RNA sequence: GGGAACGACUCGAGUAGAGUCGAAAAGAUAUGGACUCGUUGUAGCUUUUGACGCCUGGAAGUCGGAAACGAUGCAGGGCGAUAAGCUACACCGAGUCCUAAGUCAAAAGGUAACUUCGGUUACCAAGAAUAACGAAGAGUUCGCUCUUCGUUAUUCAAAAGAAACAACAACAACAAC
Reactivity to 2A3 in 0.01 (KOAc 150mM, MgCl2 10mM, bicine 150mM(pH8.5), 24C), signal-to-noise 5, nucleotides 027 to 126: g020a000u060a040u150g000g000a000c010u010c000g010u010u010g000u000a000g000c020u070u130u110u190g180a160c040g020c010c000u020g050g090a110a040g040u010c010g010g020a110a080a040c020g000a000u120g040c110a060g020g020g030c000g000a010u010a020a010g000c000u000a000c000a000c000c000g000a010g000u000c000c000u000a000a000g000u000c010a000a020a020a100g000g000u000a000a000c010u050u150c300g120g010u020u000a000c000c000a010a040
Reactivity to DMS in 0.01 (KOAc 150mM, MgCl2 10mM, bicine 150mM(pH8.5), 24C), signal-to-noise 7, nucleotides 027 to 126: g010a040u000a300u010g010g010a000c010u000c010g010u000u000g010u000a010g000c000u000u000u010u000g030a170c080g020c000c000u000g010g010a080a300g000u000c000g010g000a130a080a180c010g010a010u000g010c300a120g000g000g010c000g020a070u000a010a010g010c000u000a000c000a000c040c000g000a010g000u000c000c000u000a000a060g010u010c040a100a060a120a100g000g000u000a010a000c000u000u010c200g020g000u000u000a000c000c010a060a050
The data come from the RNA Mapping Database (RMDB), library TTRDEL. This 177-nucleotide RNA was probed chemically with 2A3 and DMS. For 2A3, 15,097 sequencing reads were counted. Conditions: 150 mM KOAc, 10 mM MgCl2 and 150 mM bicine (pH 8.5), 24 C. For 2A3 the reverse transcriptase was SuperScript II with manganese.